An RNA of 177 nucleotides, treated with DMS and 2A3 and read out base by base. It was measured as part of the RMDB libraries RFM100 and RFMREP. The RNA was probed in 150 mM KOAc, 10 mM MgCl2 and 150 mM bicine (pH 8.5) at 24 C. For 2A3, 3,870 sequencing reads were counted. DMS adducts were read by reverse transcription with MarathonRT.
[RMDB]
RNA sequence: GGGAACGACUCGAGUAGAGUCGAAAAUAAGCUAUGAUUCGGGCGAACUGAUUCAUAGUAAAAUCUACAAAGGGGGGCCGAAGAAGCAAACCGGAAAAGUGGCAGUUUUUCCGUGGAAACUGACAGGACUUUUGAGAGAAUUCGUUCUCUCAAAAGUAAAAGAAACAACAACAACAAC
Reactivity to DMS in 0.01 (KOAc 150mM, MgCl2 10mM, bicine 150mM(pH8.5), 24C), signal-to-noise 5, nucleotides 027 to 126: u010a100a270g000c000u000a000u000g000a000u000u000c000g000g020g010c190g010a120a190c020u000g000a020u000u000c000a000u010a000g010u000a050a080a120a120u010c070u020a080c070a050a090a130g010g000g000g010g010g000c030c030g000a050a070g010a130a060g000c030a020a100a130c100c040g000g000a010a030a030a030g020u010g010g000c090a070g000u010u000u000u000u010c020c030g000u010g000g000a060a050a060c040u010g000a070c120a100g010g010
Reactivity to 2A3 in 0.01 (KOAc 150mM, MgCl2 10mM, bicine 150mM(pH8.5), 24C), signal-to-noise 4, nucleotides 027 to 126: u090a020a040g000c010u000a000u000g000a010u010u000c010g010g030g010c180g190a300a080c020u000g000a000u020u000c000a010u010a000g000u010a000a000a000a030u040c020u030a080c060a020a070a040g010g000g000g000g010g000c030c030g050a110a020g020a040a020g020c040a060a010a090c020c020g030g010a040a020a000a010g060u070g050g030c040a050g010u020u010u000u020u030c020c030g020u070g020g030a050a110a030c010u040g060a040c030a090g040g070